Source: RMDB library RNAMAK, as collected in RNAgym.
The record gives the reactivity of an RNA of 207 nucleotides to 2A3 and DMS.
2A3 adducts were read by reverse transcription with SuperScript II with manganese.
DMS adducts were read by reverse transcription with MarathonRT.
The RNA was probed in 150 mM KOAc, 10 mM MgCl2 and 150 mM bicine (pH 8.5) at 24 C.

RNA sequence: GGGAACGACUCGAGUAGAGUCGAAAAUCUGCCCUUCGGGGCAGAAAAAAAGCGUACUACAGUAAGCGUGUGACAUGUUGCUGAUCCCAAAUAGGAUCAACAACAACAGCACACGAACUACUUACUGUAUCGCAAAAAACAUGCCUUCGGGCAUGAACAGCUUAAUACGUUUCGACGUAUUAAGCUGAAAAGAAACAACAACAACAAC
Reactivity to 2A3 in 0.01 (KOAc 150mM, MgCl2 10mM, bicine 150mM(pH8.5), 24C), signal-to-noise 1, nucleotides 027 to 156: u010c000u000g010c030c000c010u020u040c240g000g000g000g000c000a010g020a020a000a000a000a000a000a000g020c030g020u090a070c120u000a000c040a000g000u010a000a000g020c030g000u020g000u000g020a100c060a280u040g000u010u000g000c000u010g000a010u060c030c070c070a130a250a140u300a090g000g010a000u010c000a000a000c000a010a000c000a000a020c070a020g040c000a000c010a000c000g000a020a010c040u120a030c000u040u000a000c000u000g000u000a010u040c020g000c000a140a000a000a000a000a140c000a000u000g000c000c000u010u070c260g070g000g000c000a000u010g010a040a030
Reactivity to DMS in 0.01 (KOAc 150mM, MgCl2 10mM, bicine 150mM(pH8.5), 24C), signal-to-noise 2, nucleotides 027 to 156: u000c010u020g010c030c010c010u000u010c300g120g040g000g040c000a000g000a010a010a070a060a030a060a150g000c000g000u010a070c050u000a000c010a000g020u000a010a020g010c030g010u010g040u000g000a050c100a300u000g020u020u000g010c020u010g010a000u010c000c010c010a040a140a180u000a030g000g000a010u010c000a010a000c020a000a020c020a030a050c090a160g030c000a010c020a040c030g000a070a110c040u010a160c010u000u010a000c010u000g030u000a010u000c020g070c020a000a020a060a080a040a110c000a000u020g000c000c000u010u000c270g190g010g050c010a000u000g000a060a230